[RMDB]
RNA sequence: GGGAACGACUCGAGUAGAGUCGAAAAAUCUCCGUACACGUCAUCGAUCUUCGUCCUCAAAAGGGAGACCACGUAGCCAACGUACGCGGAGUCCUCUUUGUCACCGCGACCAUCUAGUAGCUUCUCGAUAGCGUCGAUGUCCUCGGAUAGCUUGGAGUCUCAGUGAUAGGUUCGCCUAUCACUGAGAAAAAGAAACAACAACAACAAC
Reactivity to 2A3 in 0.01 (KOAc 150mM, MgCl2 10mM, bicine 150mM(pH8.5), 24C), signal-to-noise 5, nucleotides 027 to 156: a000u050c020u000c020c000g030u050a040c060a010c110g060u040c010a160u050c040g080a090u020c070u040u050c030g090u000c010c040u090c060a060a100a050a070g030g060g000a060g030a060c090c040a100c070g050u080a010g060c040c040a050a010c040g020u040a020c080g010c030g000g000a020g020u050c030c000u110c020u090u090u130g120u090c030a030c030c040g020c010g040a040c030c000a030u040c020u040a030g020u040a020g130c030u160u000c040u020c030g110a130u050a080g060c050g060u040c020g040a030u070g060u070c030c030u050c030g070g070a140u050a090g050c030u040u060g040g040a060g040
Reactivity to DMS in 0.01 (KOAc 150mM, MgCl2 10mM, bicine 150mM(pH8.5), 24C), signal-to-noise 2, nucleotides 027 to 156: a110u000c040u000c020c040g060u000a140c010a030c020g040u000c000a150u000c050g000a050u000c020u000u000c030g000u020c030c000u020c110a070a050a090a190g000g000g000a140g000a130c000c010a070c040g000u000a080g030c110c040a080a100c140g030u000a030c000g030c010g000g010a200g000u000c060c020u000c040u000u000u000g000u010c010a110c030c070g010c040g020a080c040c050a040u000c020u000a130g040u000a090g020c030u000u030c050u020c040g010a080u010a070g000c070g000u000c060g010a110u000g060u010c030c030u000c060g030g010a130u000a060g010c040u010u000g000g010a180g000